Chemical mapping of a 177-nucleotide RNA with 2A3 and DMS. DMS adducts were read by reverse transcription with MarathonRT. It was measured as part of the RMDB library TTRDES. For 2A3 the reverse transcriptase was SuperScript II with manganese.

RNA sequence: GGGAACGACUCGAGUAGAGUCGAAAAGAUAUGGACCGUUCAGCCGAUAAGCCUGGGUCGGAAACGACCCAAGGGCUUUUGACGGCUGACGGUCCUAAGUCAAAAGCACAAAGUUCGCUUUGUGCAAUCUAGAUGGAUUCUUCGGAAUCCAUCUAGAAAAAGAAACAACAACAACAAC
Reactivity to 2A3 in 0.01 (KOAc 150mM, MgCl2 10mM, bicine 150mM(pH8.5), 24C), signal-to-noise 2, nucleotides 027 to 126: g010a010u030a000u080g000g000a000c020c000g070u240u070c120a010g000c000c070g240a300u160a300a000g020c000c040u060g040g000g010u010c000g020g040a030a020a000c000g020a030c070c050c030a000a040g010g060g000c000u040u050u050u190g200a100c000g020g000c010u000g000a000c010g000g030u000c000c000u000a020a000g000u000c020a000a040a040a070g040c000a000c010a020a040a000g030u120u160c240g060c200u000u010u000g010u010g000c000a000a040
Reactivity to DMS in 0.01 (KOAc 150mM, MgCl2 10mM, bicine 150mM(pH8.5), 24C), signal-to-noise 2, nucleotides 027 to 126: g000a010u010a070u010g000g010a010c010c000g010u010u000c010a010g000c010c000g030a150u010a010a020g010c000c000u000g000g000g040u000c000g030g000a010a010a020c000g010a040c000c010c000a010a030g030g010g020c000u000u000u000u010g020a250c050g020g000c000u000g000a000c000g000g000u000c000c000u000a000a040g000u000c010a130a120a160a190g020c000a010c000a010a000a010g010u010u010c290g030c000u000u000u000g010u000g010c010a060a040